[RMDB]
RNA sequence: GGGAACGACUCGAGUAGAGUCGAAAAGUGAAUAUGAGAAGGCCUACUACGGCACAUCACUGGAGGCCAUACGCACGGUGGUGGCCAGCGGCAAGAUCUGUGUGCUCAACCUGCAUCCGCAGAGCCAAAUGCUACCGGCAUUCGUGCCGGUAGCAUUAAAAGAAACAACAACAACAAC
Reactivity to DMS in 0.01 (KOAc 150mM, MgCl2 10mM, bicine 150mM(pH8.5), 24C), signal-to-noise 1, nucleotides 027 to 126: g050u010g000a170a080u000a000u000g000a110g000a240a120g000g000c040c010u000a120c200u000a160c140g000g010c020a030c050a010u000c010a010c000u000g020g050a290g000g050c010c070a010u000a040c250g040c120a070c040g000g060u000g010g030u000g010g000c000c050a070g020c300g000g000c080a020a090g010a110u000c000u010g000u000g000u000g020c060u020c110a090a190c090c010u000g000c020a070u000c060c120g000c020a040g000a070g000c050c020a070
The record gives the reactivity of an RNA of 177 nucleotides to DMS. The DMS profile rests on 684 reads. The RNA was probed in 150 mM KOAc, 10 mM MgCl2 and 150 mM bicine (pH 8.5) at 24 C. Reactivities are given for positions 27 through 126.